[RMDB]
RNA sequence: GGGAACGACUCGAGUAGAGUCGAAAAGUGAAACAAUCCAUUAAUUGUAAUAUUACGUUGAGCGCCUUGUUCAUCAAUGCUAUAAUUAGUUACAUAAUAAAUUGAACAUCUAAAUAUACCAAAUCCCCUUGCUUAGCUGAUUCGUCAGCUAAGCAAGAAAAGAAACAACAACAACAAC
Reactivity to 2A3 in 0.01 (KOAc 150mM, MgCl2 10mM, bicine 150mM(pH8.5), 24C), signal-to-noise 4, nucleotides 027 to 126: g080u040g000a060a040a040c010a000a070u020c040c040a020u040u060a050a040u070u070g030u020a040a020u040a070u140u080a020c060g010u000u020g060a030g030c040g090c090c140u160u210g060u060u050c010a040u000c010a050a050u060g030c060u110a020u040a110a070u170u040a040g020u030u050a020c000a000u100a050a010u050a040a140a050u060u020g030a060a020c000a040u010c030u080a080a060a100u240a030u010a140c020c030a060a060a030u050c010c000c000
Reactivity to DMS in 0.01 (KOAc 150mM, MgCl2 10mM, bicine 150mM(pH8.5), 24C), signal-to-noise 1, nucleotides 027 to 126: g000u000g000a030a090a100c040a040a070u010c070c040a070u000u030a020a000u030u000g040u000a030a020u000a020u000u000a060c110g000u000u010g000a110g000c040g030c030c060u040u000g000u050u010c130a020u010c040a100a030u000g000c160u000a000u030a020a030u000u000a050g000u020u000a120c050a080u000a020a010u030a060a070a030u040u000g020a020a100c010a040u000c020u000a040a040a020u070a120u000a170c120c060a050a080a070u010c000c000c000